An RNA of 177 nucleotides, treated with 2A3 and DMS and read out base by base. Reactivities are given for positions 27 through 126. The reactions ran in a buffer of 150 mM KOAc, 10 mM MgCl2 and 150 mM bicine (pH 8.5), at 24 C.

RNA sequence: GGGAACGACUCGAGUAGAGUCGAAAACGCUCCAAGCUGCUCGGCACUAGCUUUUACAGACUGACUCACUCCCAUUUUUCUUGUGCCAGAAGAAGAAAUGGAUGCUGUCAAUUUUUCCAUCUUGGCACCAGACGAAUACAUUCGUGUAUUCGUCUGGAAAAGAAACAACAACAACAAC
Reactivity to 2A3 in 0.01 (KOAc 150mM, MgCl2 10mM, bicine 150mM(pH8.5), 24C), signal-to-noise 3, nucleotides 027 to 126: c030g030c010u030c030c000a020a040g050c020u050g000c020u050c080g020g030c020a020c060u060a040g010c000u070u020u030u090a070c060a070g080a050c020u040g020a010c000u010c040a050c010u010c000c000c010a050u100u030u000u010u020c010u030u060g020u030g040c030c010a000g030a030a000g020a030a000g020a010a060a010u040g030g020a040u110g070c060u070g050u080c050a090a120u080u050u030u040u000c000c030a100u030c080u090u010g010g010c010a010
Reactivity to DMS in 0.01 (KOAc 150mM, MgCl2 10mM, bicine 150mM(pH8.5), 24C), signal-to-noise 2, nucleotides 027 to 126: c160g020c040u000c030c090a090a090g000c030u000g010c030u010c060g000g010c030a030c060u000a050g000c050u000u010u020u000a130c020a080g010a110c060u020g000a070c040u000c050a130c070u010c060c000c000a090u010u000u010u000u010c020u010u000g000u000g010c020c030a060g010a040a050g000a020a030g020a030a020a050u000g000g000a070u000g010c130u010g000u000c030a060a050u000u000u000u000u000c010c010a070u000c060u000u010g040g020c010a230
Annotation: For DMS the reverse transcriptase was MarathonRT. The DMS profile rests on 2,287 reads.